[RMDB]
RNA sequence: GGGAACGACUCGAGUAGAGUCGAAAAUGCAGAAUUACCGUUUAUUAAAACAAUCAUAGGUACUUUUGGGGCUUUUAACGAAAACUCAUUCGCUUUAGUUUCGCUAUUACUUGAUGUAGUUCUACCUUCAGUCUUCGAUGUUCGCAUCGAAGACUGAAAAAGAAACAACAACAACAAC
Reactivity to 2A3 in 0.01 (KOAc 150mM, MgCl2 10mM, bicine 150mM(pH8.5), 24C), signal-to-noise 1, nucleotides 027 to 126: u230g000c020a010g000a050a050u050u000a010c010c010g020u070u120u060a220u040u100a220a230a060a080c060a050a000u130c170a000u080a140g050g050u100a060c000u000u090u100u110g000g000g000g030c050u110u060u120u210a030a070c050g090a030a000a050a050c060u000c000a060u090u000c000g020c120u050u030u080a030g070u060u030u000c000g000c000u000a030u160u000a120c000u000u020g000a000u200g010u000a000g000u020u000c000u030a140c000c000u050
About this RNA:
Structure probing data (2A3) for a 177-nucleotide construct. It was measured as part of the RMDB library RFM100.